[RMDB]
RNA sequence: GGGAACGACUCGAGUAGAGUCGAAAAGCGUACUACUAGCGAUGACCACAGCAAUGAUGUGGAGGAGAACUAUGUCCCAAAUAGGACAUAGACCUCCAUUGAGCUGUGGGCCCGCUAGUAUCGCAAACCACACUCAUGUUUCGACAUGAGUGUGGAAGGAAUUAACGAAGUUCGCUUCGUUAAUUCCAAAAGAAACAACAACAACAAC
Reactivity to 2A3 in 0.01 (KOAc 150mM, MgCl2 10mM, bicine 150mM(pH8.5), 24C), signal-to-noise 6, nucleotides 027 to 156: g000c000g060u140a070c040u010a000c000u000a020g010c010g120a130u110g120a080c010c000a010c010a000g010c000a020a300u160g020a030u090g070u000g000g000a010g020g010a150g030a090a020c030u000a000u000g010u020c010c000c000a150a300a170u290a110g010g000a000c010a000u010a030g050a140c000c010u000c010c010a000u000u000g000a000g000c000u000g000u000g000g000g000c010c010c000g000c000u000a000g000u000a000u040c000g000c000a050a040a040c000c000a010c000a000c000u000c000a000u000g010u020u140u120c230g100a030c000a000u000g000a000g000u000g000u010g000g010a000a020
Reactivity to DMS in 0.01 (KOAc 150mM, MgCl2 10mM, bicine 150mM(pH8.5), 24C), signal-to-noise 1, nucleotides 027 to 156: g000c020g050u020a070c120u000a010c010u000a000g000c030g060a010u000g000a050c000c000a010c000a010g010c000a060a040u000g020a030u020g030u000g020g000a010g000g030a110g000a120a210c000u000a000u000g010u010c000c000c030a080a200a300u010a050g000g000a040c000a000u000a000g000a080c010c010u010c000c000a000u010u000g000a070g060c000u000g010u000g000g000g000c000c090c010g000c010u020a010g010u000a000u020c010g030c030a100a120a170c000c010a030c000a000c000u010c000a010u000g020u000u000u000c270g020a110c000a020u010g000a020g000u000g030u000g000g000a010a090

The record gives the reactivity of an RNA of 207 nucleotides to 2A3 and DMS. The reactions ran in a buffer of 150 mM KOAc, 10 mM MgCl2 and 150 mM bicine (pH 8.5), at 24 C. The 2A3 profile rests on 5,666 reads. It was measured as part of the RMDB library RNAMAK. 2A3 adducts were read by reverse transcription with SuperScript II with manganese. The DMS profile rests on 3,051 reads.